[RMDB]
RNA sequence: GGGAACGACUCGAGUAGAGUCGAAAAGAUAUGGAUGCACGAUCGGGAGAACACUCAUGCGUUUGACGUUUAUCGGAAACGAUAAACCGAGCAUGAGUGUUCGAAGAACGAUCGUGCAUCCUAAGUCCCUAACACGCUUGUUCGCAAGCGUGUUAGGAAAAGAAACAACAACAACAAC
Reactivity to DMS in 0.01 (KOAc 150mM, MgCl2 10mM, bicine 150mM(pH8.5), 24C), signal-to-noise 1, nucleotides 027 to 126: g000a100u000a290u000g010g000a010u000g000c010a010c030g000a010u000c000g000g000g030a160g020a020a010c010a010c000u000c000a000u000g000c030g010u010u010u020g020a200c300g000u000u000u000a000u000c000g000g010a130a130a180c000g010a010u000a000a000a010c000c040g000a080g000c000a030u000g000a020g020u020g020u000u010c000g010a060a140g020a180a210c000g000a020u000c000g080u000g000c000a000u000c000c000u000a020a120g000u000c060
Source: RMDB library TTRINS, as collected in RNAgym. This 177-nucleotide RNA was probed chemically with DMS. Values cover nucleotides 27 to 126. For DMS the reverse transcriptase was MarathonRT. The reactions ran in a buffer of 150 mM KOAc, 10 mM MgCl2 and 150 mM bicine (pH 8.5), at 24 C. The DMS profile rests on 1,374 reads.